The record gives the reactivity of an RNA of 177 nucleotides to 2A3 and DMS. The 2A3 profile rests on 1,666 reads. DMS adducts were read by reverse transcription with MarathonRT.
RNA sequence: GGGAACGACUCGAGUAGAGUCGAAAAGCUUGUCUUGGUCGUGAUAGAUGGCUCCGAAUAAAUAUUCCAGACCACCUUUGACGAGGGGAUACCCUUCCAUAUCGAAGUAGACAUCCAAGGGACUGGGCAUAGGUUGCCAAUUCGUUGGCAACCUAUGAAAAGAAACAACAACAACAAC
Reactivity to 2A3 in 0.01 (KOAc 150mM, MgCl2 10mM, bicine 150mM(pH8.5), 24C), signal-to-noise 1, nucleotides 027 to 126: g020c060u110u100g010u080c040u030u090g080g000u060c020g040u030g060a040u040a110g110a120u070g000g030c010u020c050c040g020a060a000u120a100a140a000u130a070u110u000c040c030a020g090a150c050c020a080c010c020u030u020u080g090a040c050g030a000g000g000g000g050a010u200a180c000c000c000u000u050c030c030a080u050a080u200c050g010a040a010g010u080a020g040a050c000a040u000c010c020a050a030g080g020g020a070c040u020g000g000g040
Reactivity to DMS in 0.01 (KOAc 150mM, MgCl2 10mM, bicine 150mM(pH8.5), 24C), signal-to-noise 3, nucleotides 027 to 126: g010c030u000u010g030u010c010u020u010g020g000u010c040g010u000g010a110u000a040g020a070u000g000g000c030u020c080c090g010a090a080u000a100a110a060u010a070u000u010c010c030a100g000a160c050c040a250c050c020u000u010u010g010a060c120g010a060g020g000g010g020a110u000a080c060c030c010u000u000c020c040a040u020a090u000c050g010a050a100g020u000a060g010a080c090a030u000c050c070a080a130g000g010g000a100c060u000g000g010g010
Source: RMDB library OK2TRN, as collected in RNAgym.